[RMDB]
RNA sequence: GGGAACGACUCGAGUAGAGUCGAAAACAACACUACUGCCGCACAGCCAUGGUGACAGCAGAAUCAUUAGGCUAAUAACGCUUAUUUGCAUUCUUAUCAUGCCAGCAGCAUGCCGUUAAAUACUGCUAUCUCCCACGACCUUCGGGUCGUGGGAGAUAAAAGAAACAACAACAACAAC
Reactivity to 2A3 in 0.01 (KOAc 150mM, MgCl2 10mM, bicine 150mM(pH8.5), 24C), signal-to-noise 1, nucleotides 027 to 126: c000a000a010c000a000c020u080a000c050u030g000c010c010g000c000a050c000a020g070c030c000a020u000g000g020u000g130a000c000a000g180c000a030g000a040a040u000c000a030u060u060a000g000g000c060u000a130a170u280a180a000c060g010c000u090u090a090u070u060u020g020c000a000u020u040c000u070u050a200u090c020a020u080g030c000c000a000g060c000a000g000c000a060u070g070c070c030g000u000u180a090a010a130u160a020c030u000g050c000u000
Chemical mapping of a 177-nucleotide RNA with 2A3. For 2A3, 536 sequencing reads were counted. It was measured as part of the RMDB library RFM100.